Source: RMDB library M2RFPK, as collected in RNAgym. This 207-nucleotide RNA was probed chemically with 2A3. The reactions ran in a buffer of 150 mM KOAc, 10 mM MgCl2 and 150 mM bicine (pH 8.5), at 24 C. 2A3 adducts were read by reverse transcription with SuperScript II with manganese. High 2A3 reactivity points to a flexible backbone, as in loops and unpaired stretches.

RNA sequence: GGGAACGACUCGAGUAGAGUCGAAAAACUAAUCCAAAGCAAGUAUAGGGGAACAGGUUUUUAACUAUUUUUAGGCAGAUAAAAAAUAGUAUUUGACAGUCUAACACUAACUGAACAAUAAGUGUUAAAAAGUCGUCUCUGUUCGCAGAGACGACAAUCUCUUGUAGACGUUCGCGUCUACAAGAGAAAAAGAAACAACAACAACAAC
Reactivity to 2A3 in 0.01 (KOAc 150mM, MgCl2 10mM, bicine 150mM(pH8.5), 24C), signal-to-noise 1, nucleotides 027 to 156: a020c040u060a050a010u040c020c000a030a000a020g010c010a010a000g050u070a060u130a140g030g020g010g010a040a050c040a080g110g000u060u000u020u000u020a020a000c010u010a000u000u000u000u010u010a040g020g070c040a010g060a230u160a030a100a000a000a010a010u000a000g020u020a110u070u040u070g080a030c010a000g010u000c010u010a010a000c000a010c000u000a010a000c000u030g080a090a000c010a020a000u030a000a000g000u000g000u010u010a030a060a000a030a000g010u000c000g000u000c010u000c000u000g080u050u050c120g070c070a000g010a000g000a000c000g000a000c000a000a000